[RMDB]
RNA sequence: GGGAACGACUCGAGUAGAGUCGAAAAUUGGUUUUUUGGAGGUAGACAGAAACAAGACAUAGAGAUAAAGAAAAGCAAUAGCGAUGCGGUAAAGUCUAUGCAAGAGGUUUAUGACGCCUUUCUAGAAGAUUUUAAACAUAGAGCUGAAGAAUUAAUGGGCAUAGGAAAGAUUCGUCUUUCCUAUGCCAAAAGAAACAACAACAACAAC
Reactivity to 2A3 in 0.01 (KOAc 150mM, MgCl2 10mM, bicine 150mM(pH8.5), 24C), signal-to-noise 2, nucleotides 027 to 156: u020u010g040g010u000u040u030u040u040u040g040g030a010g000g040u090a020g000a060c070a000g020a070a110a000c090a110a000g070a010c010a030u070a020g030a010g000a020u130a160a120a020g090a010a130a000a000g000c040a020a040u010a010g050c070g000a010u040g000c010g000g000u010a080a000a000g000u000c000u010a000u030g000c000a010a000g010a010g090g110u040u110u180a030u070g030a030c060g020c000c030u060u100u020c030u030a030g000a060a040g020a090u000u060u140u300a050a010a000c030a000u110a000g080a010g050c040u100g050a050a030g010a060a000u210u140a200a050u060g080
Reactivity to DMS in 0.01 (KOAc 150mM, MgCl2 10mM, bicine 150mM(pH8.5), 24C), signal-to-noise 1, nucleotides 027 to 156: u040u000g000g030u000u000u000u000u000u000g030g000a120g030g000u010a040g000a180c020a060g010a040a070a140c100a070a090g020a130c000a130u000a050g010a110g040a080u000a040a020a110g000a040a120a090a130g000c040a070a150u010a100g000c050g010a110u000g010c100g020g080u000a040a050a050g050u020c000u000a090u000g030c020a040a060g000a030g010g040u000u000u000a090u030g010a150c160g030c010c040u000u000u000c020u000a210g020a170a180g000a050u000u010u000u000a040a120a040c020a050u000a050g010a130g010c000u000g010a040a090g000a090a120u000u000a020a180u020g000
Chemical mapping of a 207-nucleotide RNA with 2A3 and DMS. Conditions: 150 mM KOAc, 10 mM MgCl2 and 150 mM bicine (pH 8.5), 24 C. For 2A3 the reverse transcriptase was SuperScript II with manganese. DMS adducts were read by reverse transcription with MarathonRT. Reactivities are rounded to 0.1 and cut off at 0 and 3.